[RMDB]
RNA sequence: GGGAACGACUCGAGUAGAGUCGAAAAUACAGUGUCUUCCAUAAAUGUUCUUUAAUUGUGGAGAUUACUGUUCUGUAGAUUAUUCACUCAGGCAUUGAGUAUGCGUUUAUUAAGUGCUUUUUGUGUCCUAGGCUCAUUCACAAGUCUAAACUUCAAAAGUAUGAAUGCUUUUCGAAGCAUUCAUACUAAAAGAAACAACAACAACAAC
Reactivity to 2A3 in 0.01 (KOAc 150mM, MgCl2 10mM, bicine 150mM(pH8.5), 24C), signal-to-noise 6, nucleotides 027 to 156: u170a000c000a000g010u000g000u020c020u200u090c040c010a010u110a120a130a040u170g080u240u210c120u160u300u180a150a100u070u040g010u060g010g000a010g000a010u060u190a070c000u000g000u050u020c040u070g120u050a050g010a110u060u090a050u240u280c020a030c050u050c020a040g120g000c050a050u020u100g030a030g040u090a070u140g070c040g060u080u080u050a120u050u090a170a050g010u050g040c030u050u060u050u120u100g060u010g020u030c010c020u010a010g010g000c000u000c040a080u210u080c040a060c010a070a020g000u010c010u100a110a060a150c050u060u070c070a060a070a030
Reactivity to DMS in 0.01 (KOAc 150mM, MgCl2 10mM, bicine 150mM(pH8.5), 24C), signal-to-noise 2, nucleotides 027 to 156: u000a020c010a030g000u010g000u000c000u000u010c010c000a010u000a070a040a120u010g020u000u000c100u000u010u020a060a150u000u000g010u000g020g000a060g020a040u000u000a020c010u000g010u010u010c110u010g000u000a150g010a140u000u000a070u010u000c080a090c050u010c030a060g010g020c040a050u000u000g010a110g020u000a050u000g020c070g000u000u000u020a080u020u010a070a100g020u000g010c020u010u000u010u000u010g020u000g030u000c050c020u000a080g040g020c010u010c030a110u000u000c140a070c140a070a060g010u000c020u000a050a060a100c050u000u010c060a020a100a120
This 207-nucleotide RNA was probed chemically with 2A3 and DMS. For 2A3 the reverse transcriptase was SuperScript II with manganese. The 2A3 profile rests on 2,817 reads.